[RMDB]
This 207-nucleotide RNA was probed chemically with DMS and 2A3.
RNA sequence: GGGAACGACUCGAGUAGAGUCGAAAAGGGUUUGAGCCAUCGCCCGAAUACGAUGGUUGAUACAAGUCGCCAUUGUACGCGACGUAGUACGUACUCAUUAGUGCGAAAGCACGGUUAGUCCGACUCGGCAGGGACGAUCUUCUGUCAAUACUUAGAACAUAUUAAUGGCAUUCGUGCCAUUAAUAUGAAAAGAAACAACAACAACAAC
Reactivity to DMS in 0.01 (KOAc 150mM, MgCl2 10mM, bicine 150mM(pH8.5), 24C), signal-to-noise 5, nucleotides 027 to 156: g000g010g020u000u010u000g010a100g020c000c040a050u000c000g020c010c060c140g030a150a090u000a020c010g000a020u000g010g020u000u000g030a100u010a060c220a080a170g010u000c010g030c010c030a120u000u010g010u000a070c050g000c030g010a050c040g010u010a090g050u000a070c030g020u000a050c030u000c060a100u000u010a100g050u000g010c000g000a120a100a210g010c020a020c010g000g020u000u000a080g010u000c020c020g010a070c030u000c030g010g030c020a110g000g040g020a070c080g010a080u000c050u000u000c020u010g010u000c020a080a110u000a080c050u000u010a120g010a120a300
Reactivity to 2A3 in 0.01 (KOAc 150mM, MgCl2 10mM, bicine 150mM(pH8.5), 24C), signal-to-noise 9, nucleotides 027 to 156: g060g010g020u090u140u190g090a020g010c020c000a010u010c010g010c000c020c000g050a060a060u080a030c020g000a010u010g000g040u020u120g070a050u100a140c120a130a060g030u000c000g000c020c020a110u090u220g060u150a050c050g010c020g020a010c020g000u000a010g010u020a060c020g000u020a030c000u010c020a040u020u090a080g000u000g010c010g060a110a020a000g000c000a000c000g000g020u020u010a010g000u010c050c020g020a030c040u030c060g020g010c010a020g030g000g040a050c060g030a080u030c060u180u020c010u040g060u030c010a050a080u090a140c060u090u140a060g040a130a030

For DMS the reverse transcriptase was MarathonRT. For DMS, 16,270 sequencing reads were counted.